[RMDB]
RNA sequence: GGGAACGACUCGAGUAGAGUCGAAAAUCGGAUCCUAGCAAUUCUACUUCUAUGAUUCCGGCGGAUCCAGGCUAUGCUGGGGAUCCGUCAACAACUGUCCUCAUCCUCGCGGAAGUGGAUCCCCAUCGAUUGAUUAUCGCUUCGGCGAUAAUCAAUCAAAAGAAACAACAACAACAAC
Reactivity to 2A3 in 0.01 (KOAc 150mM, MgCl2 10mM, bicine 150mM(pH8.5), 24C), signal-to-noise 2, nucleotides 027 to 126: u080c030g000g020a010u010c010c030u000a020g000c090a040a060u170u140c030u190a090c070u020u050c010u030a090u090g040a150u170u020c030c000g080g000c010g030g000a000u000c000c000a000g030g010c030u210a080u300g030c020u060g130g190g000g000a000u000c030c000g010u040c000a020a020c020a000a020c010u060g040u060c010c000u030c020a070u030c000c020u050c030g000c040g050g020a040a010g000u040g000g020a040u030c000c000c000c010a120u180c060
Reactivity to DMS in 0.01 (KOAc 150mM, MgCl2 10mM, bicine 150mM(pH8.5), 24C), signal-to-noise 1, nucleotides 027 to 126: u000c080g040g000a110u010c030c020u010a060g000c030a060a040u020u010c070u010a080c070u000u000c020u000a060u000g000a090u000u030c020c030g010g000c040g030g000a020u000c020c000a300g000g010c090u030a060u050g010c040u000g000g030g020g010a010u000c000c020g030u000c080a050a080c160a060a040c110u000g000u000c020c000u020c050a080u000c030c000u000c100g000c230g000g000a020a080g020u000g000g000a060u000c060c000c010c070a130u010c090
Source: RMDB library OK2TST, as collected in RNAgym. Structure probing data (2A3 and DMS) for a 177-nucleotide construct. For 2A3 the reverse transcriptase was SuperScript II with manganese. The 2A3 profile rests on 1,255 reads. Conditions: 150 mM KOAc, 10 mM MgCl2 and 150 mM bicine (pH 8.5), 24 C.